RNA sequence: GGGAACGACUCGAGUAGAGUCGAAAAACACUCACCAUGCCAGAAGAAAUUUGAUCCCUGAACUAAUAAGGAUGAUCAACCGUCUGACCUCAAUAUUCUUGUAGAUCAGUAAAUCAAGCACCAGGCACGAACAAUCUAGGUUCGCCUAGAUUGUUCGAAAAGAAACAACAACAACAAC
Reactivity to DMS in 0.01 (KOAc 150mM, MgCl2 10mM, bicine 150mM(pH8.5), 24C), signal-to-noise 2, nucleotides 027 to 126: a070c060a160c060u000c010a070c030c040a120u000g010c030c040a090g010a050a100g000a040a100a150u000u000u000g000a030u000c050c090c000u010g010a090a080c130u000a030a100u000a050a060g000g010a100u000g010a040u000c050a040a120c090c070g000u010c020u000g010a050c070c070u000c040a030a090u000a080u000u000c070u000u020g010u000a040g020a080u000c030a000g000u020a060a060a040u000c090a030a080g000c070a060c020c090a030g000g030c070a050
Reactivity to 2A3 in 0.01 (KOAc 150mM, MgCl2 10mM, bicine 150mM(pH8.5), 24C), signal-to-noise 2, nucleotides 027 to 126: a000c010a010c000u010c000a060c030c010a010u090g000c010c030a060g010a130a000g070a030a220a020u020u050u060g010a020u000c010c000c000u030g020a040a070c060u090a100a180u130a180a000g020g020a000u090g010a020u060c030a060a060c010c000g190u000c030u010g040a050c020c040u070c020a020a010u050a120u290u050c050u020u050g040u070a040g010a040u020c030a010g040u080a000a140a000u030c050a070a000g010c020a010c010c020a040g030g000c010a000